[RMDB]
RNA sequence: GGGAACGACUCGAGUAGAGUCGAAAACGGUGUCGGCGGCGCUGUUGAUGAUGCGGAUCCGGAUUCGCUGGCCAGGCUUGGCCUUAAAAGACGUGGCCGCCACGGGGAUUCGCCCGUUGAUCAGAUAUGUUACACACCGUUUCGACGGUGUGUAACAAAAAGAAACAACAACAACAAC
Reactivity to DMS in 0.01 (KOAc 150mM, MgCl2 10mM, bicine 150mM(pH8.5), 24C), signal-to-noise 2, nucleotides 027 to 126: c040g000g010u000g030u010c050g040g010c000g040g010c060g000c090u000g020u000u000g000a200u020g000a070u000g000c010g020g000a030u000c080c190g000g010a130u000u000c030g000c080u000g000g020c000c020a080g000g010c210u020u000g010g020c010c000u010u020a020a060a060a170g010a060c020g030u000g030g000c020c010g000c020c010a020c050g010g010g010g010a230u010u000c110g020c020c010c030g010u010u000g000a200u020c100a070g000a100u020a100